[RMDB]
RNA sequence: GGGAACGACUCGAGUAGAGUCGAAAACACAAUUCUCUAAGCGAUGAGAAGCGUGUGGAAAAAUAGGGAAGGGCUACGGCUAUAAUCCUAAGAAAGCUUAUCUACAAGCGGAGGUAUUCUCAGAACGAAAACCAUUUGGCGUUCGCGCCAAAUGGAAGCCUAAUGUUGAGUUCGCUCAACAUUAGGCAAAAGAAACAACAACAACAAC
Reactivity to 2A3 in 0.01 (KOAc 150mM, MgCl2 10mM, bicine 150mM(pH8.5), 24C), signal-to-noise 2, nucleotides 027 to 156: c020a000c030a040a040u060u020c020u000c010u100a220a160g140c100g080a120u100g000a070g010a000a000g030c050g020u030g000u090g020g020a070a080a010a010a000u110a030g000g000g030a070a030g050g000g000c030u050a010c120g050g000c000u010a000u070a200a060u070c010c020u010a020a020g050a080a050a030g030c020u050u050a040u130c060u110a060c050a090a030g010c000g030g010a030g030g010u060a110u080u030c030u010c040a060g080a150a030c070g090a070a010a060a110c000c000a020u000u000u000g000g000c010g030u010u040c140g020c010g000c050c000a000a000a000u010g000g000a010a010
Reactivity to DMS in 0.01 (KOAc 150mM, MgCl2 10mM, bicine 150mM(pH8.5), 24C), signal-to-noise 1, nucleotides 027 to 156: c090a040c010a020a260u000u000c020u000c000u000a110a120g010c150g010a240u000g000a050g000a050a050g000c300g030u010g000u000g000g010a010a050a050a110a100u000a080g000g010g030a070a090g040g000g000c020u000a040c220g050g020c000u000a150u000a070a090u010c050c010u010a010a050g000a110a060a130g010c050u000u000a120u000c130u000a120c090a060a080g000c050g030g020a030g020g030u000a130u010u000c030u000c040a120g020a090a050c050g000a090a060a060a170c000c010a010u000u000u010g000g000c000g000u000u000c300g030c070g000c000c000a000a000a010u000g010g000a000a040
Source: RMDB library M2RFPK, as collected in RNAgym. This 207-nucleotide RNA was probed chemically with 2A3 and DMS. Reactivities are rounded to 0.1 and cut off at 0 and 3. The RNA was probed in 150 mM KOAc, 10 mM MgCl2 and 150 mM bicine (pH 8.5) at 24 C. The DMS profile rests on 1,632 reads. DMS adducts were read by reverse transcription with MarathonRT. 2A3 adducts were read by reverse transcription with SuperScript II with manganese. The 2A3 profile rests on 1,271 reads.